[RMDB]
RNA sequence: GGGAACGACUCGAGUAGAGUCGAAAAAGCAGGACCGCGUUACGACGCGGUCCUGCAGCAAUGAGUAGAAGCGGUCAAAUUUGGUGUCGAGUUCCAACAAACCAAAUUCGGGCAUUGCUCACCGCAAAAAACUCUCUUUAGUUCGCUAAAGAGAGAACAUGCUUCUAUUGUUCGCAAUAGAAGCAUGAAAAGAAACAACAACAACAAC
Reactivity to DMS in 0.01 (KOAc 150mM, MgCl2 10mM, bicine 150mM(pH8.5), 24C), signal-to-noise 1, nucleotides 027 to 156: a180g040c000a010g080g000a020c000c040g030c050g040u000u000a160c190g010a130c040g070c040g030g000u000c000c000u010g030c080a020g000c060a050a040u010g010a070g060u010a080g000a150a180g010c050g040g000u010c030a060a000a050u000u010u000g010g010u020g010u020c050g000a190g000u010u010c070c050a130a170c070a060a120a030c000c010a010a000a050u000u000c030g000g010g030c040a110u000u010g020c020u020c050a030c000c060g060c030a020a050a060a030a050a080c000u020c000u000c000u010u000u010a010g030u000u000c300g030c030u000a000a010a010g000a010g000a020g000a030a050
Reactivity to 2A3 in 0.01 (KOAc 150mM, MgCl2 10mM, bicine 150mM(pH8.5), 24C), signal-to-noise 1, nucleotides 027 to 156: a000g000c000a000g000g000a010c010c000g060c150g080u080u110a150c300g040a000c000g010c000g030g000u000c000c000u000g010c010a000g000c000a010a040u030g000a030g030u070a040g030a140a000g000c000g060g000u020c020a060a070a030u010u000u000g000g000u030g140u130c080g090a060g090u120u100c000c000a010a000c000a030a140a020c000c000a000a020a010u060u060c040g000g060g000c100a150u030u230g030c010u020c030a020c010c020g030c000a000a040a040a040a040a000c000u000c000u010c000u000u000u010a000g010u010u050c140g000c130u000a000a000a020g000a000g010a000g000a000a000